[RMDB]
RNA sequence: GGGAACGACUCGAGUAGAGUCGAAAAGAUAUGGACAUCGGGACGCGAGGGAGCUCGGAAACGAGCUCCUACCCACCGAACUACGUCAGAUGUCCUAAGUCAAAAGGUGGCAGUUCGCUGCCACCAACAUGCGAUUUAGGUUCGCCUAAAUCGCAUGAAAAGAAACAACAACAACAAC
Reactivity to 2A3 in 0.01 (KOAc 150mM, MgCl2 10mM, bicine 150mM(pH8.5), 24C), signal-to-noise 2, nucleotides 027 to 126: g000a000u050a030u090g000g000a000c000a000u010c060g270g300g020a030c010g050c140g160a120g020g000g010a000g000c000u000c000g000g030a010a000a010c010g000a020g010c000u000c000c010u000a010c000c000c010a080c000c100g020a150a140c120u160a030c170g000u000c010a000g020a020u030g020u020c000c000u000a020a000g030u000c040a000a040a080a180g000g010u000g010g000c010a010g020u080u150c270g060c120u010g000c000c000a000c000c000a000a000
Reactivity to DMS in 0.01 (KOAc 150mM, MgCl2 10mM, bicine 150mM(pH8.5), 24C), signal-to-noise 2, nucleotides 027 to 126: g000a020u010a090u000g000g020a000c000a040u000c020g020g040g030a020c000g020c130g000a170g000g000g010a000g050c000u000c000g000g020a030a020a080c010g020a000g010c000u000c000c000u010a010c130c080c080a270c170c090g010a070a110c130u000a180c020g030u010c020a150g000a010u000g000u010c000c000u000a000a020g000u000c020a090a030a110a100g010g010u000g000g000c010a000g010u000u020c220g010c000u000g000c000c000a000c000c000a030a070
Structure probing data (2A3 and DMS) for a 177-nucleotide construct. Source: RMDB library TTRDEL, as collected in RNAgym. The 2A3 profile rests on 4,041 reads. The DMS profile rests on 1,949 reads. 2A3 adducts were read by reverse transcription with SuperScript II with manganese. For DMS the reverse transcriptase was MarathonRT. Values cover nucleotides 27 to 126.